[RMDB]
RNA sequence: GGGAACGACUCGAGUAGAGUCGAAAAGUGAUCAAGCUCGAACGCAACUAUCGCUCCACCGAGCACAUUCUCGGCGCUGCGGCUCAUCUGAUCACCCAUAAUGAAGGCCGCCUCGGCAAGACGCUGACAUAUGCGGCACGUUCGCGUGCCGCAUAUGAAAAGAAACAACAACAACAAC
Reactivity to 2A3 in 0.01 (KOAc 150mM, MgCl2 10mM, bicine 150mM(pH8.5), 24C), signal-to-noise 3, nucleotides 027 to 126: g050u060g000a030u060c030a030a020g100c010u020c090g030a080a030c080g000c020a030a110c070u100a070u190c060g000c010u020c000c000a070c040c000g000a020g020c080a020c020a150u160u080c060u010c000g070g000c070g020c050u020g010c000g020g000c000u010c080a110u010c080u070g010a050u090c030a080c000c000c000a060u200a180a130u160g040a060a050g100g000c000c000g000c030c010u060c030g010g010c050a040a030g070a040c080g000c040u020g040a000
Reactivity to DMS in 0.01 (KOAc 150mM, MgCl2 10mM, bicine 150mM(pH8.5), 24C), signal-to-noise 1, nucleotides 027 to 126: g020u040g000a000u010c040a010a170g000c020u000c050g000a020a040c300g000c030a000a100c200u000a110u000c050g010c050u000c050c080a110c040c060g000a070g030c160a190c220a060u000u000c030u000c000g030g000c060g010c050u000g010c000g000g030c000u000c030a150u020c020u000g000a040u010c120a110c010c000c000a080u030a180a160u000g000a250a060g000g000c040c000g030c070c080u000c010g000g000c080a130a070g000a100c000g000c010u040g000a120